The record gives the reactivity of an RNA of 177 nucleotides to 2A3. Reactivities are given for positions 27 through 126. Source: RMDB library RFM100, as collected in RNAgym. The 2A3 profile rests on 1,106 reads.

[RMDB]
RNA sequence: GGGAACGACUCGAGUAGAGUCGAAAAAGGGCCUGGUCGAUUAGUGAGACCAGGUGCGACGCGGGGGCUACAGCCCGGCCUCAGCGAGGUCCCCUCGGUAGGUGCCUUCCGCGUCACGGAGCGCCGUCAUACGGGGCGGGUUCGCCCGCCCCGUAUGAAAAGAAACAACAACAACAAC
Reactivity to 2A3 in 0.01 (KOAc 150mM, MgCl2 10mM, bicine 150mM(pH8.5), 24C), signal-to-noise 2, nucleotides 027 to 126: a000g130g010g010c000c000u000g000g060u020c040g030a160u100u130a260g250u210g200a120g000a010c000c000a000g010g000u000g010c050g010a000c000g000c000g000g000g000g000g000c000u040a050c010a020g050c020c020c010g000g000c010c000u070c090a110g100c080g010a010g010g060u170c090c060c000c000u020c000g000g090u020a050g080g000u010g020c000c000u230u120c020c000g000c000g020u010c010a000c070g040g010a050g050c070g130c010c000g020u000